[RMDB]
Source: RMDB library RNAMAK, as collected in RNAgym.
The record gives the reactivity of an RNA of 207 nucleotides to DMS and 2A3.
For DMS, 2,149 sequencing reads were counted.
RNA sequence: GGGAACGACUCGAGUAGAGUCGAAAACGCUGGGUGCCUAUUAUAGCCUCUCCGAAGAACAAAGGAACUACAUUCUGAAGCGCGCACGGAAUGCCUUUGGGAGGAGAGGAAUGUAGGGCACCUGUGCUGAAGCGCGCACGGCAACCGAAAGGUGCGAGCCUAUAUCUCUGUUCGCAGAGAUAUAGGCAAAAGAAACAACAACAACAAC
Reactivity to DMS in 0.01 (KOAc 150mM, MgCl2 10mM, bicine 150mM(pH8.5), 24C), signal-to-noise 1, nucleotides 027 to 156: c020g040c010u020g000g000g020u010g040c010c000u000a090u000u000a080u010a060g040c000c000u000c020u020c030c020g110a120a260g000a170a240c070a000a050a070g000g000a080a040c050u000a300c010a070u000u000c000u000g010a020a000g000c000g070c000g000c040a300c010g000g000a020a070u000g010c050c050u000u000u000g000g000g010a100g010g020a030g000a030g060g000a010a040u010g000u010a160g020g010g020c000a000c020c000u000g000u000g020c000u010g020a060a030g000c020g030c000g000c000a250c010g000g050c010a170a120c010c000g000a090a080a140g000g040u000g050c030g000a220
Reactivity to 2A3 in 0.01 (KOAc 150mM, MgCl2 10mM, bicine 150mM(pH8.5), 24C), signal-to-noise 5, nucleotides 027 to 156: c020g000c010u020g000g000g000u000g000c000c010u230a300u300u080a120u220a150g050c000c000u020c010u000c010c010g210a300a040g010a030a000c000a000a010a000g040g020a030a040c110u160a040c300a010u000u000c000u020g030a220a050g010c010g000c000g000c000a010c000g000g000a000a000u000g010c010c000u000u000u000g010g000g010a000g010g000a000g000a000g000g010a000a010u030g010u060a130g000g000g000c000a000c000c000u000g000u000g000c000u010g010a120a060g000c000g000c000g010c000a000c000g010g000c010a000a010c000c000g030a070a040a020g020g010u010g010c000g010a020